[RMDB]
RNA sequence: GGGAACGACUCGAGUAGAGUCGAAAAGAUAUGGACUAGUGCAUACUUGAAUGGGACGCAACAGCGUACGGUGUCGGAAACGACAUUACGACAUGCGUAACAUUCAAGUAUGCACUAGUCCUAAGUCGUCUUACUCAAUCUUCGGAUUGAGUAAGACAAAAGAAACAACAACAACAAC
Reactivity to DMS in 0.01 (KOAc 150mM, MgCl2 10mM, bicine 150mM(pH8.5), 24C), signal-to-noise 3, nucleotides 027 to 126: g000a110u010a300u010g010g020a020c020u000a000g010u000g000c000a010u000a020c010u000u010g000a020a010u030g000g000g010a020c000g000c010a030a190c300a170g040c010g000u040a040c300g020g020u000g000u010c000g010g000a150a110a270c020g010a040c000a020u000u010a000c010g000a080c110a220u000g030c010g000u000a020a020c000a000u000u000c000a010a010g020u000a000u000g000c000a000c010u000a000g010u000c000c000u000a010a060g030u000c040

Structure probing data (DMS) for a 177-nucleotide construct.
The DMS profile rests on 1,769 reads.
For DMS the reverse transcriptase was MarathonRT.
Source: RMDB library TTRINS, as collected in RNAgym.
The RNA was probed in 150 mM KOAc, 10 mM MgCl2 and 150 mM bicine (pH 8.5) at 24 C.